[RMDB]
RNA sequence: GGGAACGACUCGAGUAGAGUCGAAAAGGCGACAAGUUCGCUUGUCGCCACGGGGUCCAGCCUGGAAAGGCUGGAGGUAUUGGAAUGGUCGGGCCGGCAUUCAACGCGGGACAUUCGUGUCCCGCAAGAGUCGAAAUAUGUUCGCAUAUUUCGACUCAAAAGAAACAACAACAACAAC
Reactivity to DMS in 0.01 (KOAc 150mM, MgCl2 10mM, bicine 150mM(pH8.5), 24C), signal-to-noise 2, nucleotides 027 to 126: g030g010c000g000a010c010a010a010g010u000u020c180g020c000u000u000g000u000c010g010c010c000a010c120g000g000g000g000u000c000c000a010g000c000c010u030g000g040a090a130a020g010g010c000u000g010g000a000g000g000u000a140u010u010g000g000a070a050u010g000g020u000c080g000g000g000c040c040g000g000c070a060u020u000c100a080a090c230g000c000g000g000g010a010c000a040u000u000c210g010u000g000u000c000c000c000g020c010a010a010
Reactivity to 2A3 in 0.01 (KOAc 150mM, MgCl2 10mM, bicine 150mM(pH8.5), 24C), signal-to-noise 2, nucleotides 027 to 126: g000g000c010g000a010c000a020a000g010u030u060c150g090c090u000u000g000u020c000g000c000c000a010c030g040g000g000g010u000c010c010a000g000c020c000u060g080g090a200a030a010g010g020c010u000g000g050a000g000g010u130a150u060u160g060g030a070a040u050g050g080u070c030g020g030g030c050c020g010g030c010a010u060u110c020a050a050c070g000c020g000g000g000a010c010a010u030u070c160g060u020g000u010c040c010c000g000c000a000a000

The record gives the reactivity of an RNA of 177 nucleotides to DMS and 2A3. For DMS, 2,998 sequencing reads were counted. The reactions ran in a buffer of 150 mM KOAc, 10 mM MgCl2 and 150 mM bicine (pH 8.5), at 24 C. The data come from the RNA Mapping Database (RMDB), library M2PK50. For 2A3 the reverse transcriptase was SuperScript II with manganese.